[RMDB]
RNA sequence: GGGAACGACUCGAGUAGAGUCGAAAACUGUAAUUCUUCGGAAUUACAGAAAAAAACCUUUGUGGAGGACGAGCAUCGAUCUAUAGGUUCCCAUUGGGAACCCAUAGGGAGCUUACCUCCACUCUGGUAAAAACUGCGCCUGUUCGCAGGCGCAGAAGUAUGGUUGUAAGUUCGCUUACAACCAUACAAAAGAAACAACAACAACAAC
Reactivity to 2A3 in 0.01 (KOAc 150mM, MgCl2 10mM, bicine 150mM(pH8.5), 24C), signal-to-noise 2, nucleotides 027 to 156: c010u010g000u000a000a000u000u000c000u040u030c290g060g000a000a010u000u000a010c000a000g000a090a000a000a000a000a000a000c000c000u010u000u050g000u000g010g010a010g010g050a300c080g000a030g010c020a180u300c030g060a070u030c010u000a000u000a030g000g000u000u000c000c010c090a200u170u300g000g000g000a000a010c000c000c000a000u000a000g010g020g000a000g000c000u000u010a010c000c000u000c000c010a000c000u000c020u010g040g000u060a140a110a000a000a070c000u000g000c000g000c010c010u030g010u080u090c260g010c110a000g020g000c000g000c000a000g000a020a000